Source information: Structure probing data (2A3 and DMS) for a 207-nucleotide construct. Source: RMDB library OK3TST, as collected in RNAgym. For 2A3, 1,966 sequencing reads were counted. For DMS, 2,172 sequencing reads were counted.

[RMDB]
RNA sequence: GGGAACGACUCGAGUAGAGUCGAAAAUGAUCUGAUGGGAGUUCUGCAUCAACACAGUUCAGGGACUAUUCCUGAGGAAGUAGGAAUGACAAGCCGUGUACCACUAGGACUAGAUAGUGAGAUUAACCCAGAGACCAGGAACCUUCCUUCAAGGAAGACACAGUUUUGUUUUCGAACAAAACUGUGUAAAAGAAACAACAACAACAAC
Reactivity to 2A3 in 0.01 (KOAc 150mM, MgCl2 10mM, bicine 150mM(pH8.5), 24C), signal-to-noise 4, nucleotides 027 to 156: u130g030a040u010c010u020g030a040u080g040g020g000a060g050u120u030c020u040g070c010a050u030c020a070a090c050a010c040a090g040u090u060c040a030g000g030g000a010c060u130a080u140u070c020c000u080g000a020g050g040a040a030g030u080a050g000g040a080a050u080g040a100c050a070a000g020c030c040g030u050g000u070a070c010c020a050c090u030a040g050g030a070c020u010a030g040a140u040a030g040u050g040a080g000a080u140u090a050a040c010c020c000a020g020a010g010a060c000c070a030g000g030a030a050c000c000u020u000c020c020u110u180c100a100a030g030g010a010a000g030
Reactivity to DMS in 0.01 (KOAc 150mM, MgCl2 10mM, bicine 150mM(pH8.5), 24C), signal-to-noise 2, nucleotides 027 to 156: u000g000a100u000c050u010g030a120u000g020g000g000a160g000u010u000c010u000g000c040a100u030c100a050a070c070a060c020a090g000u000u000c040a130g000g020g000a180c030u000a130u020u010c010c010u000g000a130g000g000a050a140g050u000a080g020g010a090a110u000g020a090c070a050a140g040c000c020g030u000g040u010a060c030c010a080c040u010a070g010g040a080c050u010a060g010a120u000a040g030u000g000a090g020a080u010u000a070a100c060c010c000a190g020a170g020a050c030c000a080g000g000a050a140c050c040u000u000c010c010u000u010c150a020a080g010g000a040a080g010
The RNA was probed in 150 mM KOAc, 10 mM MgCl2 and 150 mM bicine (pH 8.5) at 24 C.